[RMDB]
RNA sequence: GGGAACGACUCGAGUAGAGUCGAAAAGUUAUGACCGUCCAGAAAAGACAAGAUGAGAAAGUGCAGUAUUGACUGUCUUCAAACGCACCUGUCCUUGCUCAAGUGCUGGGAUUGUGUGCCAACGGCUGUUGCGCUUACAGUUCGCUGUAAGCGCAACAAAAGAAACAACAACAACAAC
Reactivity to 2A3 in 0.01 (KOAc 150mM, MgCl2 10mM, bicine 150mM(pH8.5), 24C), signal-to-noise 1, nucleotides 027 to 126: g030u070u080a120u280g020a040c010c030g050u010c030c000a040g070a070a110a000a000g010a010c010a090a000g050a070u200g040a000g070a120a070a000g100u260g100c030a000g010u100a130u210u210g170a090c020u000g000u000c000u030u070c020a050a000a020c070g000c000a000c000c000u020g020u060c010c000u000u000g000c010u000c080a270a140g170u100g090c030u020g030g020g000a000u000u040g060u000g000u000g010c040c000a040a000c010g020g000c040u040